RNA sequence: GGGAACGACUCGAGUAGAGUCGAAAAGGAAAUAAACGGCAGCUAUAAGGUGGUGCCGAACCAGCGUGACCUACCAACACGCAACGAGCAGUCUGGUAUGACUGCAAAGGUAUGGUAAACAAAAAAAGCUAAUUAAGACAUUCGUGUCUUAAUUAGCAAAAGAAACAACAACAACAAC
Reactivity to DMS in 0.01 (KOAc 150mM, MgCl2 10mM, bicine 150mM(pH8.5), 24C), signal-to-noise 5, nucleotides 027 to 126: g000g000a070a080a090u010a050a120a200c020g020g020c020a060g000c030u000a110u020a120a100g010g030u010g010g010u000g030c000c010g000a060a060c050c040a140g000c010g010u000g010a050c030c000u000a030c010c010a200a070c020a010c020g010c020a140a080c140g010a260g010c010a000g020u000c000u000g030g020u000a050u010g010a010c000u000g010c010a030a020a080g010g000u000a070u020g000g010u000a040a070a040c110a020a000a030a090a080a070a080
Reactivity to 2A3 in 0.01 (KOAc 150mM, MgCl2 10mM, bicine 150mM(pH8.5), 24C), signal-to-noise 4, nucleotides 027 to 126: g040g000a100a060a040u130a100a130a000c010g000g000c010a030g030c050u070a070u100a300a100g210g040u100g040g100u070g020c010c010g010a010a010c010c000a000g000c000g010u010g000a080c000c020u020a030c000c020a030a050c010a000c020g010c030a020a050c040g020a020g000c000a000g000u000c000u110g160g070u300a110u220g000a000c000u000g000c010a000a070a010g010g000u080a060u110g000g050u100a080a110a070c110a080a050a010a000a000a020a010